[RMDB]
RNA sequence: GGGAACGACUCGAGUAGAGUCGAAAACAGGAGGUCAAGACGUUUUCGCCCUCGUUCUGAGUUCGCAAGUGGCAAUACCUAUGCUUUGUAUGUGCGGGACACACUGCAGCCGGGGAUGCGAGUGCGGUAGCGUAGAAUCUUUCGAGAUUCUACGCUAAAAAGAAACAACAACAACAAC
Reactivity to DMS in 0.01 (KOAc 150mM, MgCl2 10mM, bicine 150mM(pH8.5), 24C), signal-to-noise 7, nucleotides 027 to 126: c070a100g010g000a080g010g010u010c070a070a090g000a080c090g010u000u000u010u000c030g020c030c040c020u000c020g010u000u010c030u000g000a090g020u000u010c100g020c040a040a070g010u000g020g010c040a060a080u010a160c060c070u000a100u010g010c060u000u000u010g020u010a050u010g020u000g020c050g010g000g010a130c140a090c050a020c050u000g000c030a050g000c230c050g020g000g000g010a140u010g000c020g010a060g010u000g010c030g000g000
Reactivity to 2A3 in 0.01 (KOAc 150mM, MgCl2 10mM, bicine 150mM(pH8.5), 24C), signal-to-noise 4, nucleotides 027 to 126: c020a030g070g060a050g000g090u080c030a040a060g080a070c040g010u020u000u070u000c010g040c000c030c000u000c000g030u100u030c030u070g090a110g020u050u050c050g000c050a100a060g030u040g100g000c030a040a070u090a230c000c020u090a110u200g020c050u110u170u150g120u100a160u110g110u030g020c030g030g070g060a020c020a000c010a000c080u040g000c020a000g000c000c020g020g000g010g040a020u100g010c010g020a010g000u040g000c020g020g040

An RNA of 177 nucleotides, treated with DMS and 2A3 and read out base by base. The reactions ran in a buffer of 150 mM KOAc, 10 mM MgCl2 and 150 mM bicine (pH 8.5), at 24 C. The 2A3 profile rests on 7,554 reads.